Annotation
The record gives the reactivity of an RNA of 177 nucleotides to 2A3 and DMS. Conditions: 150 mM KOAc, 10 mM MgCl2 and 150 mM bicine (pH 8.5), 24 C. For 2A3, 1,431 sequencing reads were counted. For 2A3 the reverse transcriptase was SuperScript II with manganese.
[RMDB]
RNA sequence: GGGAACGACUCGAGUAGAGUCGAAAACAGUCAAAGUGAAGGCGGGCCAGACCAUCGCCGCAUUCUACCAGAGCACCGUCAUGAUCUUUGGCACGAUGGCUCGCUACAUUCCUAGAGUUAGGGAAAAACGUGGAUAGUACUUCGGUACUAUCCACGUAAAAGAAACAACAACAACAAC
Reactivity to 2A3 in 0.01 (KOAc 150mM, MgCl2 10mM, bicine 150mM(pH8.5), 24C), signal-to-noise 2, nucleotides 027 to 126: c020a010g140u090c060a030a110a000g060u040g150a060a090g040g020c020g000g030g000c000c010a010g030a090c040c000a060u070c040g000c030c030g010c000a020u090u010c040u070a110c000c040a030g030a030g060c040a060c100c000g060u080c050a230u090g080a090u010c020u080u040u060g020g000c020a040c120g020a050u120g010g000c000u000c010g000c000u030a000c000a070u030u060c000c000u000a040g020a040g250u150u140a040g000g050g040a040a000a000a000
Reactivity to DMS in 0.01 (KOAc 150mM, MgCl2 10mM, bicine 150mM(pH8.5), 24C), signal-to-noise 2, nucleotides 027 to 126: c120a070g010u030c090a140a070a040g030u000g010a200a100g010g020c020g030g000g030c010c020a120g000a130c050c090a110u000c130g030c040c010g010c150a030u000u000c050u000a040c070c020a090g000a060g000c110a040c010c040g020u000c060a070u010g000a100u000c020u000u000u000g010g020c030a090c170g010a070u010g000g000c010u010c040g000c010u000a050c110a090u020u000c020c010u000a030g020a090g010u010u010a040g000g000g000a030a080a060a090